[RMDB]
RNA sequence: GGGAACGACUCGAGUAGAGUCGAAAACGACCCCCUGACGGGUCGGACAUAGCGUCAGGAUCAUCCGUGACAGUCACCACGGUAAUCAUGUGGCUGAUGAUGGUUUUCCAUCUUAAUCUGACUGUGUCGUAGCAGUCUACAGUACUAUGACAUUAGACCAUACUGCUGCUUUCGAGCAGCAGUAUGGAAAAGAAACAACAACAACAAC
Reactivity to 2A3 in 0.01 (KOAc 150mM, MgCl2 10mM, bicine 150mM(pH8.5), 24C), signal-to-noise 1, nucleotides 027 to 156: c020g000a000c000c000c020c000c010u010g010a010c000g000g000g000u040c010g060g090a030c030a110u120a070g140c000g000u000c000a000g020g030a060u140c000a070u000c000c020g010u010g040a060c020a000g000u000c000a000c000c000a000c010g000g040u180a020a090u110c060a120u100g000u010g000g000c090u000g000a010u050g000a000u000g020g010u170u060u160u180c000c000a000u000c000u020u060a210a060u090c130u060g020a030c000u000g000u000g010u070c000g000u010a010g000c010a000g050u040c060u060a070c030a070g010u030a110c010u020a040u020g040a030c020a040u030u210a090g000a030

The record gives the reactivity of an RNA of 207 nucleotides to 2A3.
Reactivities are given for positions 27 through 156.
2A3 adducts were read by reverse transcription with SuperScript II with manganese.
Source: RMDB library OK3TST, as collected in RNAgym.
As a SHAPE reagent, 2A3 marks flexible, mostly unpaired nucleotides at the ribose 2'-OH.
Conditions: 150 mM KOAc, 10 mM MgCl2 and 150 mM bicine (pH 8.5), 24 C.